[RMDB]
RNA sequence: GGGAACGACUCGAGUAGAGUCGAAAAGACGGAUUCUUCGGAAUCCGUCAAAGUGACGGUGAAAAAUGGCCAAUGCGCCAGCUACCACCGAGACAGGGCGCAAAACUGGAGUGUUCGCACUCCAGAAUCUAUCUGCGUUCUUCGGAACGCAGAUAGAAAAAGAAACAACAACAACAAC
Reactivity to DMS in 0.01 (KOAc 150mM, MgCl2 10mM, bicine 150mM(pH8.5), 24C), signal-to-noise 1, nucleotides 027 to 126: g010a070c000g050g000a000u000u000c000u000u040c190g060g020a010a020u000c000c020g000u000c010a010a020a050g030u010g020a150c100g010g010u050g020a020a030a030a130a130u010g010g020c020c020a040a130u000g020c090g020c050c000a160g020c020u000a060c060c000a020c020c040g010a130g000a030c100a060g010g030g010c020g000c030a000a040a050a180c000u000g020g000a010g060u000g040u020u010c300g000c000a010c000u050c000c010a000g000a060a050
Structure probing data (DMS) for a 177-nucleotide construct. The DMS profile rests on 722 reads. The data come from the RNA Mapping Database (RMDB), library M2PK50. In probing experiments dimethyl sulfate is read out at A N1 and C N3, which are open when not base-paired. Conditions: 150 mM KOAc, 10 mM MgCl2 and 150 mM bicine (pH 8.5), 24 C.